[RMDB]
RNA sequence: GGGAACGACUCGAGUAGAGUCGAAAAUGAGCUAUUCGGCUGCCCGCAAAGGGGCUUCCGGGUUAUACUCGCAAAUUCAAGCUAUGAACGAUACUUCGUCGGCUUCUAAAAGUUCAGCUGCUGCAAUCAAAAAAGCCAAUGAGCAGAUUGCCGCUUAGCCUUUUAAUCAGUUCGCUGAUUAAAAGGCAAAAGAAACAACAACAACAAC
Reactivity to 2A3 in 0.01 (KOAc 150mM, MgCl2 10mM, bicine 150mM(pH8.5), 24C), signal-to-noise 2, nucleotides 027 to 156: u140g010a000g000c030u040a010u070u070c040g000g050c010u000g000c040c000c070g030c130a190a130a090g060g010g020g000c030u020u000c000c000g010g050g000u140u020a170u080a080c040u030c010g040c010a090a080a000u230u150c030a040a010g000c010u030a090u300g010a130a000c000g040a000u060a260c130u140u030c040g010u000c020g030g020c030u140u070c040u150a140a200a080a020g000u040u130c010a040g000c130u050g000c000u030g010c030a010a000u000c010a030a050a250a180a120a040g010c010c010a040a240u180g010a100g000c000a000g010a000u000u010g010c010c070g010c020u000u050a000